RNA sequence: GGGAACGACUCGAGUAGAGUCGAAAAAAGCGCCGCGGCCUGUAUUUCUAGACCUGCCCUUCGCCUGGUUCGUGGCGCCUUGUGACCCCGGGCCCCUGCCGCCUGCAAGUCGAAAUUGCGCUGUGCUCCAUAUAAAAUCGUUCGCGAUUUUAUAUGGAAAAGAAACAACAACAACAAC
Reactivity to DMS in 0.01 (KOAc 150mM, MgCl2 10mM, bicine 150mM(pH8.5), 24C), signal-to-noise 1, nucleotides 027 to 126: a070a030g020c020g000c000c020g020c030g000g000c000c010u000g020u020a090u010u030u000c090u030a080g010a050c030c020u010g000c020c000c020u030u000c080g000c070c070u000g000g010u010u050c010g050u000g000g010c000g020c020c010u000u000g010u020g010a170c010c000c000c020g010g010g000c010c010c020c000u010g000c010c020g000c040c010u000g010c020a030a060g020u010c070g010a050a100a110u020u020g010c020g000c040u000g000u010g000c040u000
Reactivity to 2A3 in 0.01 (KOAc 150mM, MgCl2 10mM, bicine 150mM(pH8.5), 24C), signal-to-noise 6, nucleotides 027 to 126: a000a000g020c010g000c010c010g020c010g000g000c000c000u080g040u130a190u060u140u070c070u050a040g040a110c000c020u040g020c010c000c000u060u060c030g040c020c020u040g010g000u140u250c010g000u010g010g010c010g000c000c000u040u060g030u060g070a090c000c000c010c010g010g030g000c010c000c000c010u030g010c020c010g010c000c000u020g000c020a030a020g030u040c010g050a010a050a120u070u070g000c030g000c020u020g020u040g030c010u010